[RMDB]
RNA sequence: GGGAACGACUCGAGUAGAGUCGAAAAUGGAAGAAGUCAGGAAACUUGGGACACCGCUGCUGAGGUCCUUGCAGCCCCACGGUCCCCAGGCUGGUGACUGGUGGGGGAGUAUGGAGUCCAGCUGACCUACACUGAUAGGCUUCGGCCUAUCAGUGUAAAAAGAAACAACAACAACAAC
Reactivity to 2A3 in 0.01 (KOAc 150mM, MgCl2 10mM, bicine 150mM(pH8.5), 24C), signal-to-noise 2, nucleotides 027 to 126: u130g060g010a060a040g020a050a000g040u080c100a020g030g140a140a090a150c050u030u060g050g050g000a000c040a000c040c000g010c040u040g000c000u020g040a060g060g050u040c030c000u020u030g010c010a060g100c010c020c000c000a010c000g000g000u040c040c020c010c000a030g300g110c140u170g020g040u010g010a000c010u130g220g020u020g000g000g000g000g000a000g000u010a060u110g000g000a010g050u020c020c000a010g010c000u010g050a050c040c000
Reactivity to DMS in 0.01 (KOAc 150mM, MgCl2 10mM, bicine 150mM(pH8.5), 24C), signal-to-noise 2, nucleotides 027 to 126: u020g020g010a090a100g000a070a090g000u000c040a080g040g000a110a110a090c030u010u010g010g020g010a090c090a090c050c070g000c100u010g010c030u000g000a070g010g000u010c020c010u000u000g010c010a100g000c020c000c010c020a010c000g000g010u000c000c060c000c030a120g020g020c160u010g020g010u010g010a020c020u000g030g050u000g000g000g000g010g000a030g030u000a060u000g010g000a090g010u000c030c010a090g010c020u010g000a070c040c030
The record gives the reactivity of an RNA of 177 nucleotides to 2A3 and DMS. In probing experiments dimethyl sulfate is read out at A N1 and C N3, which are open when not base-paired. DMS adducts were read by reverse transcription with MarathonRT. For 2A3, 1,742 sequencing reads were counted. The RNA was probed in 150 mM KOAc, 10 mM MgCl2 and 150 mM bicine (pH 8.5) at 24 C.